[RMDB]
RNA sequence: GGGAACGACUCGAGUAGAGUCGAAAAAUUGAUUUGAGACGUCGCCUUGCAGUGUUAACUUGGCUCUCAUGAACCUCUUUGAUCUUCCACAAAGGGUAGGCUACGGGUGAUACCUCUUAGGCUAAAACCUAAACAAUACAUUCGUGUAUUGUUUAGGAAAAGAAACAACAACAACAAC
Reactivity to DMS in 0.01 (KOAc 150mM, MgCl2 10mM, bicine 150mM(pH8.5), 24C), signal-to-noise 9, nucleotides 027 to 126: a080u010u000g010a090u000u000u000g000a080g010a070c130g010u000c070g010c030c020u000u010g020c070a060g020u000g000u000u000a060a070c070u000u000g010g010c020u000c040u000c070a070u000g010a080a090c100c010u000c020u000u000u000g000a070u010c070u000u000c050c050a130c070a040a040a050g000g000g010u000a060g010g010c030u000a050c170g000g010g010u000g010a100u000a110c050c010u000c050u000u010a070g000g000c070u000a050a050a070a120
Reactivity to 2A3 in 0.01 (KOAc 150mM, MgCl2 10mM, bicine 150mM(pH8.5), 24C), signal-to-noise 9, nucleotides 027 to 126: a000u100u120g040a040u050u030u150g050a040g010a020c060g040u060c030g020c020c000u030u070g010c050a060g030u030g040u290u130a080a070c010u040u050g040g010c010u000c000u010c050a030u090g040a040a050c010c000u010c000u050u020u030g040a050u040c040u100u020c040c010a040c020a040a050a010g040g010g010u040a050g050g010c010u040a020c050g020g000g020u060g040a050u080a100c010c000u020c030u040u060a040g050g000c030u040a060a040a050a070